RNA sequence: GGGAACGACUCGAGUAGAGUCGAAAACGGAGAGGAUAUGUACCAGACCUUCUCUCGUGCGAUCGAGAACGCCAAUGUCAUCAUCUCCACCUACUCCGACGGAUCUCUCGGAGAGGAUGUGAUGGUCGUUGAUGCCAAGCUUCGGCUUGGCAUCAACAAAAGAAACAACAACAACAAC
Reactivity to 2A3 in 0.01 (KOAc 150mM, MgCl2 10mM, bicine 150mM(pH8.5), 24C), signal-to-noise 2, nucleotides 027 to 126: c050g050g060a010g000a000g000g030a020u040a110u300g140u100a220c090c090a050g060a140c020c000u040u060c000u000c010u060c020g040u030g030c070g010a110u090c030g010a020g020a150a000c010g020c020c020a040a050u130g100u130c040a040u000c000a020u020c040u060c080c000a060c010c000u190a230c010u090c000c000g030a050c070g020g160a250u020c100u030c000u020c050g010g000a000g000a020g060g020a030u060g020u020g030a010u010g030g030u060c060
Reactivity to DMS in 0.01 (KOAc 150mM, MgCl2 10mM, bicine 150mM(pH8.5), 24C), signal-to-noise 1, nucleotides 027 to 126: c110g000g000a070g010a020g000g020a070u010a100u000g020u000a120c170c120a160g010a140c080c030u000u040c000u000c000u030c050g010u000g010c050g000a080u000c060g000a140g020a060a100c020g010c060c000a010a040u000g010u010c030a000u000c010a030u000c110u000c110c130a080c070c020u010a230c020u000c000c000g000a060c150g010g000a170u010c120u000c100u000c020g000g000a030g010a070g020g000a050u020g020u000g000a030u000g000g040u010c200